[RMDB]
RNA sequence: GGGAACGACUCGAGUAGAGUCGAAAACGAUCAGUACGUUCGCGUACUGAUCGAAGCUACUGGAGACAGUAGCAAGUCUAAGACCUUGUUAGGCGGAAACAAGGUAUCAUGGAGGAAGGCCGGACCUCCAUACUUAGACAACCGCCAACCGGCCAACGAUCGGACUAAUGUUCGCAUUAGUCCGAUCAAAAGAAACAACAACAACAAC
Reactivity to 2A3 in 0.01 (KOAc 150mM, MgCl2 10mM, bicine 150mM(pH8.5), 24C), signal-to-noise 1, nucleotides 027 to 156: c000g000a000u000c000a000g010u000a000c010g010u000u100c250g030c020g120u000a000c000u010g000a000u000c000g000a000a000g010c000u000a000c000u010g000g010a070g010a020c010a000g000u000a000g010c010a010a010g000u000c000u000a010a000g010a040c010c000u000u000g010u030u050a130g020g120c070g030g070a040a000a010c000a000a000g020g020u040a080u110c080a040u020g010g000a010g080g000a130a260g030g010c010c020g020g070a230c020c000u010c000c000a000u010a010c010u000u000a000g000a010c020a020a090c080c090g110c070c010a000a010c010c000g020g000c010c000a000a010c070